[RMDB]
RNA sequence: GGGAACGACUCGAGUAGAGUCGAAAACUGCGCCCGGCAUACAAGCAUUGGCUGCUCAAGGACCGGCUGCUGCGAGUCCAAACGCAGACCAUCGAACGCAACGGAAUGGGCGUCCCGGUCUAUGAGGCCGGUCCCGGCGACGAUCAGACGCAGAUGGACCAUCAGUAUGUUUCGACAUACUGAUGGUAAAAGAAACAACAACAACAAC
Reactivity to DMS in 0.01 (KOAc 150mM, MgCl2 10mM, bicine 150mM(pH8.5), 24C), signal-to-noise 2, nucleotides 027 to 156: c050u000g020c000g030c010c010c020g000g060c050a180u000a100c100a110a150g030c050a140u000u000g050g000c060u000g020c040u020c030a220a290g010g010a040c020c010g030g040c020u000g000c130u000g040c080g000a160g000u010c070c080a040a160a160c110g010c050a070g010a150c030c020a070u000c050g010a060a110c030g000c020a100a290c060g000g010a110a220u020g010g020g000c020g000u000c050c000c030g030g020u000c000u000a210u010g000a110g040g000c010c020g000g000u000c030c010c010g010g000c030g000a070c080g010a130u000c080a050g010a180c000g000c000a090g010a180u000g010g000
Reactivity to 2A3 in 0.01 (KOAc 150mM, MgCl2 10mM, bicine 150mM(pH8.5), 24C), signal-to-noise 5, nucleotides 027 to 156: c010u020g000c000g000c000c010c030g030g030c050a080u160a130c070a080a060g030c020a040u080u150g100g010c030u050g000c010u060c080a050a060g010g000a010c000c010g020g020c050u090g020c000u050g020c060g020a030g080u070c050c030a100a070a010c030g000c010a000g070a130c020c000a030u080c070g080a110a040c050g000c070a090a140c100g030g150a140a170u220g080g000g000c010g000u020c010c020c010g000g000u020c050u060a140u220g040a070g040g000c000c010g000g000u010c000c000c020g000g000c020g010a060c040g020a060u090c060a040g040a080c040g000c010a010g010a070u110g110g010

An RNA of 207 nucleotides, treated with DMS and 2A3 and read out base by base. Reactivities are given for positions 27 through 156. The reactions ran in a buffer of 150 mM KOAc, 10 mM MgCl2 and 150 mM bicine (pH 8.5), at 24 C. The 2A3 profile rests on 3,552 reads.